[RMDB]
RNA sequence: GGGAACGACUCGAGUAGAGUCGAAAAAUGAAGUCUUCACGCAUAGGUGCGUGACGUAGUUCAUCUGCCAUUUAGACCUCCAAUCUUGCUAUCAGCAUACUACAUUUAUUGUUAUAAAUCAACUACUUAAUGUGAUGAGGUUAAGGUCGCGUUGCAAUAUUGCUGAGCUGUUCGCAGCUCAGCAAUAAAAAGAAACAACAACAACAAC
Reactivity to 2A3 in 0.01 (KOAc 150mM, MgCl2 10mM, bicine 150mM(pH8.5), 24C), signal-to-noise 1, nucleotides 027 to 156: a000u000g010a000a040g110u010c000u140u000c000a010c020g000c010a050u160a230g300g090u300g080c000g020u020g020a020c020g030u080a120g020u040u060c040a080u000c010u050g000c000c000a000u130u130u040a030g060a020c000c000u000c020c020a000a100u010c010u010u160g080c000u090a100u300c100a030g010c000a080u110a110c060u000a010c030a000u130u050u160a190u040u120g000u020u150a060u080a130a060a020u220c020a170a000c020u050a000c090u160u120a090a000u090g000u020g110a030u020g000a020g060g000u000u040a000a000g060g000u000c080g000c030g000u010u020g050c000a020a110